[RMDB]
RNA sequence: GGGAACGACUCGAGUAGAGUCGAAAAAGCUGAGGUAGGAGGAUCGCUUGAGCCCAGGAGUUCUGGGCUGCAGUGUGCUCUGCCAUUCGGGUAUCUGCACCAAGUUCAGCAACAAUAUGGUGAACUCAACCCUUAUGCUUUUCGAAGCAUAAGGGUUAAAAGAAACAACAACAACAAC
Reactivity to DMS in 0.01 (KOAc 150mM, MgCl2 10mM, bicine 150mM(pH8.5), 24C), signal-to-noise 5, nucleotides 027 to 126: a050g010c030u000g010a060g010g020u000a050g030g020a050g010g000a090u010c060g020c010u000u010g030a060g000c010c010c000a030g010g010a180g020u010u000c000u000g000g000g010c010u000g010c030a050g010u000g020u000g000c020u010c000u000g010c020c030a170u010u010c090g010g000g000u000a050u000c060u000g000c130a120c050c040a090a050g010u000u000c030a020g000c030a040a090c100a070a080u010a120u000g000g010u000g000a040a040c030u000c130
Reactivity to 2A3 in 0.01 (KOAc 150mM, MgCl2 10mM, bicine 150mM(pH8.5), 24C), signal-to-noise 3, nucleotides 027 to 126: a010g020c050u030g000a010g040g020u110a060g060g130a010g020g050a070u110c040g010c050u080u140g080a010g010c000c000c000a020g060g070a230g110u240u160c010u000g000g000g000c000u000g020c000a000g010u030g020u050g070c010u000c000u010g000c020c000a060u080u070c050g000g040g000u050a050u050c040u050g090c010a010c020c000a040a000g010u040u020c020a060g060c020a060a030c040a170a050u120a110u250g100g000u010g020a020a010c020u000c050